RNA sequence: GGGAACGACUCGAGUAGAGUCGAAAAGCUGCAAGCAAAGCAAACACAGAACAUGUGCCCCUCUUUGAAACUGAACACCGCACAUAAAAUUAUAGCAUAGAAUCACAGUUCGAGGGGGGUUCAAAGUGCGGGAGCAAUGCACAAGUGCUCAUUAACAAUCGAUGAGGAUAUUCGUAUCCUCAUCGAUAAAAGAAACAACAACAACAAC
Reactivity to 2A3 in 0.01 (KOAc 150mM, MgCl2 10mM, bicine 150mM(pH8.5), 24C), signal-to-noise 3, nucleotides 027 to 156: g020c020u080g040c070a030a100g000c000a090a010a020g010c020a120a130a010c060a000c000a030g100a170a040c030a130u080g020u030g020c000c010c010c000u000c020u020u050u190g100a220a090a040c010u010g030a080a010c060a040c070c090g060c120a060c040a120u300a050a100a090a010u250u180a140u140a120g010c000a020u020a160g070a090a000u100c020a040c010a090g000u020u010c010g000a000g000g000g000g010g000g000u000u010c000a040a060a020g040u030g040c000g010g030g000a030g010c010a020a080u130g000c050a030c010a130a070g050u020g000c000u010c050a050u080u070a100a040c070a090
Reactivity to DMS in 0.01 (KOAc 150mM, MgCl2 10mM, bicine 150mM(pH8.5), 24C), signal-to-noise 2, nucleotides 027 to 156: g010c060u010g030c030a110a100g040c060a100a100a180g040c030a080a260a190c030a160c080a110g010a120a060c050a240u030g000u000g000c000c000c000c000u000c000u030u020u020g060a090a010a090c030u020g020a060a080c060a140c040c080g050c120a070c080a100u000a030a080a130a210u050u000a130u000a190g010c050a120u000a130g010a170a100u000c060a120c020a080g080u020u000c030g000a060g030g030g000g030g000g000u000u000c010a060a090a120g050u000g030c030g000g000g000a170g010c010a020a060u020g030c040a030c230a090a080g010u010g010c000u000c060a110u000u000a090a070c090a060

The data come from the RNA Mapping Database (RMDB), library OK3TST. Structure probing data (2A3 and DMS) for a 207-nucleotide construct. The RNA was probed in 150 mM KOAc, 10 mM MgCl2 and 150 mM bicine (pH 8.5) at 24 C.